[RMDB]
RNA sequence: GGGAACGACUCGAGUAGAGUCGAAAAAAAGUGUACGAAAGAACAAAGAAGCAAUCAAACCGAGUAGUGAAAUGAUGGCUUCAGUCCAAAAUGGGCAAACACUACAGACCGAGCCAAAGGCAAUUAACGUUACUGGUGUAUUCGUACACCAGUAACGAAAAGAAACAACAACAACAAC
Reactivity to DMS in 0.01 (KOAc 150mM, MgCl2 10mM, bicine 150mM(pH8.5), 24C), signal-to-noise 1, nucleotides 027 to 126: a080a010a030g020u000g000u010a000c050g040a050a090a120g000a080a080c100a030a090a190g000a030a020g000c030a020a020u000c030a000a140a240c070c110g020a110g000u000a100g000u010g000a140a080a030u000g000a030u000g000g010c010u000u000c060a080g010u000c010c030a130a080a090a060u010g000g000g010c090a070a070a030c050a020c040u000a070c190a020g010a040c110c040g020a090g010c040c050a020a060a050g000g030c040a050a020u020u000a050a090
Reactivity to 2A3 in 0.01 (KOAc 150mM, MgCl2 10mM, bicine 150mM(pH8.5), 24C), signal-to-noise 2, nucleotides 027 to 126: a000a000a000g050u040g000u050a040c060g030a100a060a010g040a140a040c050a050a130a070g020a010a010g030c020a030a000u000c020a010a080a030c050c030g040a050g130u230a010g010u100g070a090a040a090u030g020a010u020g050g000c010u000u020c020a010g010u010c000c010a050a230a000a260u120g000g000g000c000a040a060a000c000a010c000u060a020c000a000g050a060c000c040g020a040g040c000c010a080a050a000g040g000c020a060a060u160u060a130a020